[RMDB]
The record gives the reactivity of an RNA of 177 nucleotides to DMS and 2A3. The reactions ran in a buffer of 150 mM KOAc, 10 mM MgCl2 and 150 mM bicine (pH 8.5), at 24 C. The 2A3 profile rests on 1,207 reads. The data come from the RNA Mapping Database (RMDB), library OK2TST. DMS adducts were read by reverse transcription with MarathonRT. For DMS, 881 sequencing reads were counted.
RNA sequence: GGGAACGACUCGAGUAGAGUCGAAAAUGCCCGACAUCCUGUCUGGCAAGCCGCACCGCAUCCUCAUCGCCACUUUCGCGCAAGCUUCGCGCAUUAGCUUGCGUUCAACAGGAUGGCGGUGGUGUGAGAGCCCACCACUAUUCGUAGUGGUGGGCUCAAAAGAAACAACAACAACAAC
Reactivity to DMS in 0.01 (KOAc 150mM, MgCl2 10mM, bicine 150mM(pH8.5), 24C), signal-to-noise 1, nucleotides 027 to 126: u000g000c000c000c040g010a020c040a120u020c220c180u000g020u000c000u000g000g010c020a070a090g000c070c010g000c060a050c000c020g020c100a090u000c010c000u000c130a070u000c050g000c000c020a060c110u000u010u000c220g000c000g000c180a020a050g000c030u000u000c180g020c070g000c080a120u000u000a010g020c020u010u000g000c040g060u000u000c140a030a080c300a020g000g000a100u010g000g010c010g020g040u000g000g020u010g000u000g000a220
Reactivity to 2A3 in 0.01 (KOAc 150mM, MgCl2 10mM, bicine 150mM(pH8.5), 24C), signal-to-noise 1, nucleotides 027 to 126: u010g020c000c000c000g000a000c000a000u190c040c130u170g010u000c000u010g030g030c030a050a010g080c040c010g040c030a000c000c020g040c020a020u010c010c030u040c030a030u040c010g030c020c010a010c070u010u110u070c070g010c000g000c060a000a000g000c000u040u130c070g040c020g010c180a150u000u040a000g000c000u010u000g000c000g010u040u040c030a080a060c000a070g110g020a210u070g060g020c000g020g010u010g030g000u050g000u000g050a130